[RMDB]
RNA sequence: GGGAACGACUCGAGUAGAGUCGAAAAGUAAGUGUAAUUUAGCUUUCCGGUUAACCACCUCAAAGCUACGCGCUAAUGAUAAUAUCUUAUCAGUUAGAUUCACUGCUAACAAAAUUGUUGGUGGUGCCUCUAAUCCUCUCUUCGGAGAGGAUUAGAGAAAAGAAACAACAACAACAAC
Reactivity to DMS in 0.01 (KOAc 150mM, MgCl2 10mM, bicine 150mM(pH8.5), 24C), signal-to-noise 1, nucleotides 027 to 126: g020u000a020a070g040u000g020u000a090a100u000u010u000a010g000c000u010u000u010c030c040g010g010u000u000a100a100c190c260a190c010c010u010c220a020a020a050g000c010u000a010c260g040c080g000c020u000a000a030u000g000a000u000a020a050u010a140u020c210u000u000a010u000c000a120g010u000u010a000g000a090u000u010c030a010c000u000g000c020u000a000a010c020a040a070a150a080u000u030g000u000u000g000g010u010g020g000u000g010c300
Reactivity to 2A3 in 0.01 (KOAc 150mM, MgCl2 10mM, bicine 150mM(pH8.5), 24C), signal-to-noise 1, nucleotides 027 to 126: g060u120a030a100g010u000g030u070a070a190u040u050u060a010g060c040u030u000u100c050c030g010g040u030u030a050a030c060c020a010c000c000u000c040a020a050a000g000c000u000a040c050g000c010g010c080u000a070a060u000g030a020u000a030a110u100a070u130c100u090u030a020u020c020a130g060u000u080a010g000a110u050u030c010a020c020u000g010c000u040a000a040c060a050a160a270a110u210u090g010u000u010g000g010u010g000g000u000g010c010